[RMDB]
RNA sequence: GGGAACGACUCGAGUAGAGUCGAAAAGUAUAUAAAAGAUCGACCGGUCCACAGGGAAGAGAUAUCCUUUUUUCCAUCAGUCUUGGGUUGAUACGCUAAGCCUUAAUUGGUUUUUCUUGUAGAGGACCAAGUAUAGCGAUUUCGAUCGCUAUACUUGAAAAGAAACAACAACAACAAC
Reactivity to 2A3 in 0.01 (KOAc 150mM, MgCl2 10mM, bicine 150mM(pH8.5), 24C), signal-to-noise 2, nucleotides 027 to 126: g000u010a030u010a000u030a260a170a050a050g040a100u030c010g020a020c020c000g000g040u050c040c020a040c030a040g020g040g000a020a000g020a000g000a010u050a050u180c010c000u060u050u020u010u060u050c020c010a060u080c040a090g090u000c010u050u120g080g020g010u000u020g040a050u060a100c030g000c080u030a030a020g020c030c000u060u090a090a090u270u020g060g000u010u030u030u030u030c050u010u090g050u050a050g010a060g170g000a000c020
Reactivity to DMS in 0.01 (KOAc 150mM, MgCl2 10mM, bicine 150mM(pH8.5), 24C), signal-to-noise 4, nucleotides 027 to 126: g010u000a050u000a110u010a060a060a130a120g010a090u000c020g010a090c100c040g020g010u000c030c030a090c140a100g020g000g000a030a070g000a090g010a110u010a070u000c050c020u000u000u000u000u010u000c010c020a090u000c140a070g000u000c040u000u000g000g010g000u000u010g000a080u000a020c070g020c070u010a020a040g000c020c010u000u000a090a140u010u010g020g010u000u000u000u000u000c010u000u000g030u010a080g010a110g010g010a060c080
Conditions: 150 mM KOAc, 10 mM MgCl2 and 150 mM bicine (pH 8.5), 24 C.
The record gives the reactivity of an RNA of 177 nucleotides to 2A3 and DMS.
The 2A3 profile rests on 2,416 reads.
It was measured as part of the RMDB library OK2TST.
2A3 adducts were read by reverse transcription with SuperScript II with manganese.
Reactivities are given for positions 27 through 126.